[RMDB]
RNA sequence: GGGAACGACUCGAGUAGAGUCGAAAAGCAUACUGGCGGUCUUGAGGGAUCUAGGGGCAGACAGAACAGUCGGUGGAGCGGUGAAAUGCGUAGAGAUCGACUGGAAUGCCGAUGGCGAAGGCGGUCUGUUAUUUUGUACCUUCGGGUACAAAAUAACAAAAGAAACAACAACAACAAC
Reactivity to DMS in 0.01 (KOAc 150mM, MgCl2 10mM, bicine 150mM(pH8.5), 24C), signal-to-noise 1, nucleotides 027 to 126: g010c080a080u020a140c080u000g010g020c090g000g030u010c030u010u020g000a050g000g000g010a050u020c080u000a060g000g010g000g020c100a040g010a060c100a080g000a100a170c030a030g000u020c030g010g010u000g000g000a120g000c040g030g010u000g000a080a090a100u000g000c020g070u010a160g020a230g000a030u010c010g000a040c010u010g000g000a090a090u000g030c010c010g000a080u010g020g010c050g000a050a100g000g000c110g000g000u010c060u000
Reactivity to 2A3 in 0.01 (KOAc 150mM, MgCl2 10mM, bicine 150mM(pH8.5), 24C), signal-to-noise 1, nucleotides 027 to 126: g070c000a030u050a120c010u100g000g040c020g000g000u000c010u050u070g070a090g080g000g000a040u070c070u090a050g090g000g000g000c000a000g060a050c020a030g090a130a020c010a010g030u000c030g010g030u010g060g050a020g000c010g030g010u060g070a080a080a000u140g000c030g050u150a040g000a000g000a080u020c000g050a080c040u000g000g070a110a000u160g000c010c010g100a130u070g010g020c050g010a030a000g010g000c020g000g010u000c010u020